An RNA of 177 nucleotides, treated with DMS and 2A3 and read out base by base.
RNA sequence: GGGAACGACUCGAGUAGAGUCGAAAAGAUAUGGAUAUCUCCUCGUGGCAAUGAUGUCGCUCGGAAACGAGCGAUUGAGCCACACGCGAGGAGAGUAUCCUAAGUCAAAAGAAGCCUUCGGGCUUCAGUACAUACAGAACUUCGGUUCUGUAUGUACAAAAGAAACAACAACAACAAC
Reactivity to DMS in 0.01 (KOAc 150mM, MgCl2 10mM, bicine 150mM(pH8.5), 24C), signal-to-noise 6, nucleotides 027 to 126: g000a040u010a300u010g000g000a020u000a040u000c010u000c000c000u000c010g020u000g010g040c010a200a190u020g010a080u000g010u000c000g000c000u010c000g010g000a110a120a180c000g010a010g020c000g000a000u010u000g000a120g020c010c020a110c140a030c230g020c190g000a010g010g000a010g000a030g010u010a010u000c000c000u010a040a120g000u010c040a110a080a180a160g000a020a000g010c000c000u000u010c270g050g010g000c000u000u000c000a060
Reactivity to 2A3 in 0.01 (KOAc 150mM, MgCl2 10mM, bicine 150mM(pH8.5), 24C), signal-to-noise 1, nucleotides 027 to 126: g020a030u070a060u170g010g000a000u000a020u010c000u010c010c000u030c040g070u240g000g020c070a270a300u120g010a030u080g070u010c000g000c010u000c020g020g030a050a080a050c000g010a000g020c020g010a010u010u010g000a000g000c030c000a040c010a030c120g190c080g000a000g000g000a010g000a000g010u010a000u010c000c000u020a130a020g060u030c030a010a040a060a300g010a010a010g000c020c000u090u120c300g110g010g000c000u000u000c000a000
For DMS, 8,882 sequencing reads were counted.